Source: RMDB library OK1LIB, as collected in RNAgym.
This 177-nucleotide RNA was probed chemically with 2A3 and DMS.
2A3 is a SHAPE reagent: it acylates the 2'-hydroxyl of flexible nucleotides of all four kinds.
RNA sequence: GGGAACGACUCGAGUAGAGUCGAAAAGACGGAAAAGAUCGAACCUAAGAAGAUCAGGAAAUGUGAGCCGAAUCCUAGGGCUCCUAGGUACGCAUCGUCCGAUGCGAAAUAAACACUAACGUCGAAACAUACCCGACGAUUUCGAUCGUCGGGUAUGAAAAGAAACAACAACAACAAC
Reactivity to 2A3 in 0.01 (KOAc 150mM, MgCl2 10mM, bicine 150mM(pH8.5), 24C), signal-to-noise 3, nucleotides 027 to 126: g010a000c000g010g030a030a040a070a040g000a010u070c010g010a090a180c070c040u110a060a040g050a070a020g010a060u070c020a050g040g150a100a100a100u190g050u090g020a000g020c040c050g030a030a060u040c020c020u090a100g050g000g000c030u020c010c000u010a000g030g000u060a050c000g010c010a020u020c000g230u020c070c130g010a000u000g000c000g030a010a130a020u120a050a040a000c080a010c050u060a110a000c020g010u010c020g050a010a010a020
Reactivity to DMS in 0.01 (KOAc 150mM, MgCl2 10mM, bicine 150mM(pH8.5), 24C), signal-to-noise 3, nucleotides 027 to 126: g000a000c000g040g000a100a090a100a070g000a040u000c000g020a070a210c170c200u020a090a080g000a140a140g000a030u000c030a060g010g000a060a070a070u020g000u000g000a020g010c060c000g020a140a070u000c040c050u020a040g010g000g000c020u010c010c010u010a050g000g010u010a150c000g000c000a000u000c000g040u050c160c080g000a040u000g010c010g000a030a040a090u050a080a020a120c090a050c140u040a120a070c000g000u000c010g010a130a100a130